[RMDB]
Structure probing data (2A3 and DMS) for a 177-nucleotide construct. The RNA was probed in 150 mM KOAc, 10 mM MgCl2 and 150 mM bicine (pH 8.5) at 24 C. For 2A3, 1,964 sequencing reads were counted. The DMS profile rests on 2,140 reads.

RNA sequence: GGGAACGACUCGAGUAGAGUCGAAAAGAGGAUUCAACGAGCUUCGUAGCAACGAUAGCAACGUAGCUUUUGCUACGACCCUAGCUAUCGAGGGCAGCUACGUCCCCUGCUCGAGGGCAGAAUCCGAAGUCAGGUAGUCAUUCGUGACUACCUGACUAAAAGAAACAACAACAACAAC
Reactivity to 2A3 in 0.01 (KOAc 150mM, MgCl2 10mM, bicine 150mM(pH8.5), 24C), signal-to-noise 2, nucleotides 027 to 126: g120a040g000g000a020u010u030c020a050a040c070g020a010g000c060u160u100c020g010u010a000g020c000a030a030c000g020a010u000a020g000c010a010a030c000g030u010a000g010c020u040u170u250u300g010c020u000a010c000g160a180c070c010c010u020a050g000c000u000a010u020c020g000a080g060g120g060c080a070g010c040u020a010c040g060u120c020c040c010c020u030g010c000u060c000g020a120g010g070g000c040a050g000a010a010u000c010c000g000a020
Reactivity to DMS in 0.01 (KOAc 150mM, MgCl2 10mM, bicine 150mM(pH8.5), 24C), signal-to-noise 3, nucleotides 027 to 126: g010a140g010g000a010u000u000c020a080a130c070g000a080g010c030u000u000c020g020u000a030g010c000a120a180c080g000a010u000a010g030c010a090a150c000g000u000a000g000c000u000u000u010u020g000c000u000a010c020g020a130c160c200c150u010a080g000c000u000a010u000c010g000a060g000g000g000c290a160g000c020u000a030c020g000u000c060c050c060c100u000g000c010u000c010g020a080g010g020g010c240a100g000a020a020u000c000c010g000a100